Chemical mapping of a 170-nucleotide RNA with DMS and 2A3. It was measured as part of the RMDB library 15KLIB. The RNA was probed in 150 mM KOAc, 10 mM MgCl2 and 150 mM bicine (pH 8.5) at 24 C. 2A3 adducts were read by reverse transcription with SuperScript II with manganese. The DMS profile rests on 5,341 reads.

[RMDB]
RNA sequence: GGGAACGACUCGAGUAGAGUCGAAAAAUGUGUACUUGCUAUUUUGGUGUCUUCUCUCUUUUGAACCUUAAGCUUAGAGCACCUAUGGGUGUCUAUGACUUUAAGGUCUCAACACAAGAGUUCAGAUUAACGUGCAGCUUCGGCUGCACGAAAAGAAACAACAACAACAAC
Reactivity to DMS in 0.01 (KOAc 150mM, MgCl2 10mM, bicine 150mM(pH8.5), 24C), signal-to-noise 3, nucleotides 027 to 129: a140u020g030u000g000u040a110c160u040u000g090c070u030a050u050u030u080u060g000g000u010g020u020c020u010u050c050u050c040u000c080u000u000u000u000g000a040a070c000c010u000u000a060a000g010c020u010u020a010g020a140g030c000a040c050c020u030a240u100g030g000g050u010g040u010c000u030a000u010g020a120c020u000u000u000a050a000g030g020u000c180u030c020a030a020c300a120c220a070a010g000a020g010u030u030c090a030g030a100u050u030a130a110
Reactivity to 2A3 in 0.01 (KOAc 150mM, MgCl2 10mM, bicine 150mM(pH8.5), 24C), signal-to-noise 3, nucleotides 027 to 129: a000u100g070u010g000u050a050c020u000u110g050c050u000a070u150u190u080u090g090g040u100g050u030c000u120u110c030u000c000u000c060u080u080u040u090g000a000a000c000c000u000u000a010a010g000c050u000u030a020g010a050g060c000a000c020c000u030a180u230g190g000g000u000g000u010c000u000a010u000g120a240c000u020u070u030a000a000g000g000u000c020u020c020a000a000c080a030c020a070a000g010a000g000u080u060c010a030g030a110u080u030a070a030